[RMDB]
RNA sequence: GGGAACGACUCGAGUAGAGUCGAAAAUUGCAAAACCGUGAUAGUGCUGAGCCGAUGAGCCUCUAAUGAAAUUAUAGACUCAUCGGCUCAGGACCAUUGCGGUUGUGCAAAACGGUGUUAUUGCUGACAUGUUAUAGGGCUUCGGCCCUAUAACAUGAAAAGAAACAACAACAACAAC
Reactivity to DMS in 0.01 (KOAc 150mM, MgCl2 10mM, bicine 150mM(pH8.5), 24C), signal-to-noise 2, nucleotides 027 to 126: u000u000g000c000a030a020a010a000c010c000g030u000g000a000u000a030g020u000g000c000u000g020a010g020c000c000g000a000u000g000a000g000c010c000u010c070u010a030a030u010g000a150a080a300u010u000a020u000a000g000a040c000u010c000a000u000c000g010g000c000u010c000a000g000g000a010c030c040a020u000u000g010c010g000g020u000u010g000u000g010c020a010a020a120a140c150g010g020u000g020u000u000a080u020u010g000c020u010g000a280